[RMDB]
RNA sequence: GGGAACGACUCGAGUAGAGUCGAAAAUACCAGCUCCUGGAGUGUCUAUGAUGAUUGCUGCAGUUAAAGAGUUCGUAGUCGAAGUGGUUAUAACGGCGUAACAGGCCUUCUCUCAAGGAGGGUUAUGUCUCAGUCCAAUCUUCGGAUUGGACUGAGAAAAAGAAACAACAACAACAAC
Reactivity to DMS in 0.01 (KOAc 150mM, MgCl2 10mM, bicine 150mM(pH8.5), 24C), signal-to-noise 2, nucleotides 027 to 126: u020a070c030c020a260g040c030u000c000c000u000g000g000a010g000u000g000u000c000u010a150u000g000a090u040g000a040u040u000g000c000u000g030c010a030g000u050u000a090a070a140g000a080g000u010u040c010g000u010a050g000u000c060g010a040a070g000u030g000g080u020u030a070u000a050a050c090g010g000c000g000u000a050a090c070a070g060g020c010c020u000u000c000u000c000u090c240a070a260g000g000a050g010g000g000u030u000a050u060g030
Reactivity to 2A3 in 0.01 (KOAc 150mM, MgCl2 10mM, bicine 150mM(pH8.5), 24C), signal-to-noise 2, nucleotides 027 to 126: u110a000c000c000a010g020c030u010c020c000u000g000g100a070g050u060g010u000c040u110a140u200g110a050u030g020a030u060u150g000c000u020g000c010a050g010u070u160a030a020a010g050a000g010u000u060c060g040u050a000g020u010c050g020a080a020g070u080g100g060u040u000a030u000a230a040c010g080g010c040g010u080a070a020c010a040g010g030c010c000u000u000c050u030c000u010c060a030a020g000g010a040g010g010g020u100u070a150u140g010
The record gives the reactivity of an RNA of 177 nucleotides to DMS and 2A3. For DMS, 2,116 sequencing reads were counted. DMS adducts were read by reverse transcription with MarathonRT. Values cover nucleotides 27 to 126. The data come from the RNA Mapping Database (RMDB), library RFM100. Conditions: 150 mM KOAc, 10 mM MgCl2 and 150 mM bicine (pH 8.5), 24 C.